[RMDB]
RNA sequence: GGGAACGACUCGAGUAGAGUCGAAAAUAUAAAAUCAUUUACACCUUGGUCAUGGUAGCUAAGAAUAUUGUAUCUAAAAUUGGGGAGUGGGGAGAUGUUUGGUUAUAUUCCCUUCUCAUCGAUGGUCAUAGGCAAUUUGAUUCGUCAAAUUGCCUAUAAAAGAAACAACAACAACAAC
Reactivity to DMS in 0.01 (KOAc 150mM, MgCl2 10mM, bicine 150mM(pH8.5), 24C), signal-to-noise 2, nucleotides 027 to 126: u020a130u030a070a040a120a110u030c060a050u030u030u010a080c100a080c130c050u000u000g000g000u000c070a040u000g000g000u020a070g000c100u010a070a080g010a060a060u010a120u000u000g000u000a050u000c040u000a020a060a030a060u000u000g000g000g000g000a020g030u000g000g000g000g000a030g000a010u010g030u000u000u010g040g000u000u010a030u000a070u000u000c010c010c000u010u000c000u000c010a070u000c030g010a060u020g000g000u010c150
Reactivity to 2A3 in 0.01 (KOAc 150mM, MgCl2 10mM, bicine 150mM(pH8.5), 24C), signal-to-noise 2, nucleotides 027 to 126: u210a020u130a000a150a100a080u090c000a010u120u140u030a070c000a030c010c030u030u050g040g000u010c050a110u080g090g000u050a080g010c030u040a090a030g020a090a060u160a100u030u110g040u050a050u000c060u220a090a140a100a170u070u060g000g000g010g000a030g060u120g000g030g000g000a010g040a030u130g120u100u020u120g100g000u030u000a020u000a060u050u040c000c000c130u000u040c030u000c000a030u030c020g020a010u030g100g000u060c010

Structure probing data (DMS and 2A3) for a 177-nucleotide construct. The data come from the RNA Mapping Database (RMDB), libraries RFM100 and RFMREP. DMS adducts were read by reverse transcription with MarathonRT. The 2A3 profile rests on 1,122 reads.